RNA sequence: GGGAACGACUCGAGUAGAGUCGAAAACAUGAGCCAAGAGCCGGGCGAGGAGAACGCGGGGGAAGGAUCGGCGACCGAGAGGGGAUGAACUGGUAAGAGGCGGGGAACGCCGAGGGGAUAUCUCCCACUUUCUAUUAUUCUUCGGAAUAAUAGAAAGAAAAGAAACAACAACAACAAC
Reactivity to DMS in 0.01 (KOAc 150mM, MgCl2 10mM, bicine 150mM(pH8.5), 24C), signal-to-noise 1, nucleotides 027 to 126: c120a090u020g010a060g030c020c070a100a090g010a230g000c040c050g000g020g050c050g010a100g000g000a090g010a070a070c060g010c110g000g000g000g000g000a110a070g010g000a050u000c040g000g010c030g050a100c090c060g000a090g020a080g010g000g000g020a070u010g000a110a110c100u010g040g000u010a090a050g000a080g010g000c040g000g000g000g000a030a110c030g010c010c010g000a100g000g000g020g010a040u000a040u000c070u010c000c010c010a200
Reactivity to 2A3 in 0.01 (KOAc 150mM, MgCl2 10mM, bicine 150mM(pH8.5), 24C), signal-to-noise 1, nucleotides 027 to 126: c020a090u090g050a000g000c030c020a100a050g050a010g140c020c020g030g040g000c080g050a120g010g030a090g000a100a010c030g000c040g050g060g010g020g000a070a040g030g000a060u050c020g060g000c030g000a040c060c000g090a070g000a040g080g040g000g020a010u030g000a090a060c070u070g000g070u060a120a050g040a100g100g000c010g000g010g020g010a000a090c020g000c010c000g000a040g030g030g020g010a010u010a040u150c030u010c050c000c000a060

Structure probing data (DMS and 2A3) for a 177-nucleotide construct. For 2A3 the reverse transcriptase was SuperScript II with manganese. The reactions ran in a buffer of 150 mM KOAc, 10 mM MgCl2 and 150 mM bicine (pH 8.5), at 24 C. It was measured as part of the RMDB library VIROID. For DMS the reverse transcriptase was MarathonRT.